[RMDB]
RNA sequence: GGGAACGACUCGAGUAGAGUCGAAAAUACCGAAGCUCUGGACUUUGCCGCAAGGCAGAGUGGUAGAAGAGCGUUGCAUGCGCGUCGAAGGGCGAUGGCGACUGACCCUGGAGCACAUGCAAGUGAGUUACUAUCUCGUAUUCGUACGAGAUAGUAAAAAAGAAACAACAACAACAAC
Reactivity to 2A3 in 0.01 (KOAc 150mM, MgCl2 10mM, bicine 150mM(pH8.5), 24C), signal-to-noise 9, nucleotides 027 to 126: u140a020c010c010g040a040a010g000c000u000c010u030g020g040a010c000u010u000u000g010c000c010g040c090a070a050g000g000c000a000g000a000g010u040g040g060u160a090g030a200a000g000a010g000c010g000u000u000g000c000a000u010g000c020g000c030g160u300c020g080a040a020g010g000g000c030g030a020u040g040g030c050g040a050c010u050g030a060c000c000c000u010g010g020a010g000c000a000c000a010u010g000c000a000a010g110u110g040a080g030
Reactivity to DMS in 0.01 (KOAc 150mM, MgCl2 10mM, bicine 150mM(pH8.5), 24C), signal-to-noise 9, nucleotides 027 to 126: u030a180c010c010g010a120a110g020c000u000c000u010g010g010a030c000u000u000u000g010c000c000g010c300a090a130g010g010c000a000g010a000g000u000g010g020u020a110g010a120a020g000a010g010c010g020u010u000g010c000a000u000g010c050g010c000g010u010c150g010a240a110g000g000g010c020g000a100u000g000g000c240g000a140c010u000g000a300c300c010c010u000g000g000a080g000c010a040c000a010u000g000c000a010a020g010u020g010a150g020
Source: RMDB libraries RFM100 and RFMREP, as collected in RNAgym. Chemical mapping of a 177-nucleotide RNA with 2A3 and DMS. For 2A3 the reverse transcriptase was SuperScript II with manganese. High 2A3 reactivity points to a flexible backbone, as in loops and unpaired stretches. DMS adducts were read by reverse transcription with MarathonRT.